RNA sequence: GGGAACGACUCGAGUAGAGUCGAAAAGCGCUUAAAUUAAAUUUCCCUUGCUGAGCACAUCUCAGCAAACAAUAACAAAUAACAAAUAAGAACAGCAGGGAAGGCUGUUCUUAUUUGUUACAAUAAAACCUUCAUUCUGUUUCGACAGAAUGAAGGUAAAAGAAACAACAACAACAAC
Reactivity to 2A3 in 0.01 (KOAc 150mM, MgCl2 10mM, bicine 150mM(pH8.5), 24C), signal-to-noise 3, nucleotides 027 to 126: g040c050g040c140u140u140a060a120a140u190u090a110a090a150u120u220u050c000c000c040u000u010g000c000u000g000a010g020c090a050c000a280u100c030u010c000a010g000c000a000a010a000c010a000a070u200a070a030c030a050a090a050u050a020a000c000a010a000a000u000a010a000g000a000a000c000a010g020c010a020g080g060g250a060a050g100g000c000u000g000u000u000c000u000u000a000u000u000u000g000u000u000a010c000a010a000u040a000a010a010
Reactivity to DMS in 0.01 (KOAc 150mM, MgCl2 10mM, bicine 150mM(pH8.5), 24C), signal-to-noise 1, nucleotides 027 to 126: g000c190g060c190u000u000a030a100a050u000u010a060a110a150u010u020u000c010c000c000u000u000g000c000u000g000a000g000c210a090c300a120u000c020u000c000a020g030c000a000a000a080c100a080a060u010a050a020c210a070a050a090u000a010a010c000a000a000a020u000a000a060g010a000a000c000a000g010c010a080g050g010g020a090a110g000g010c000u000g020u010u000c000u000u000a000u000u010u000g000u020u010a000c070a090a120u000a060a040a020